[RMDB]
RNA sequence: GGGAACGACUCGAGUAGAGUCGAAAAUAGUAGAGAUGGGGUUUCACCAUGUUGGCCAGGCUGGUCUCGAAAUCCUGACCUCGUGAUCUGCCGGCCUUGGCCUCCCGAAGUGCUGGGAUUACAAGCGAUACUAUGGUUUGUUCGCAAACCAUAGUAUAAAAGAAACAACAACAACAAC
Reactivity to DMS in 0.01 (KOAc 150mM, MgCl2 10mM, bicine 150mM(pH8.5), 24C), signal-to-noise 5, nucleotides 027 to 126: u010a070g010u000a070g010a060g010a060u000g010g010g000g010u000u000u000c040a110c050c050a060u010g010u000u000g010g000c000c010a050g010g000c030u000g010g010u010c040u000c060g000a040a050a080u010c030c030u000g010a070c110c040u000c060g010u000g000a080u000c050u000g010c020c010g010g010c010c010u000u010g020g000c010c020u000c010c010c000g010a090a080g010u010g010c010u000g000g010g000a080u000u010a030c120a070a070g000c080g000
Reactivity to 2A3 in 0.01 (KOAc 150mM, MgCl2 10mM, bicine 150mM(pH8.5), 24C), signal-to-noise 2, nucleotides 027 to 126: u070a030g120u040a020g000a020g000a100u130g010g020g020g030u040u090u060c010a020c020c040a030u130g090u070u070g040g000c000c000a040g010g000c000u020g000g020u030c040u030c080g030a050a030a020u060c010c020u040g070a130c010c010u050c040g030u020g010a090u010c040u040g010c000c000g020g000c000c000u040u070g000g000c000c020u000c000c020c000g040a090a020g060u080g060c030u010g000g020g080a090u050u110a040c030a100a020g010c010g030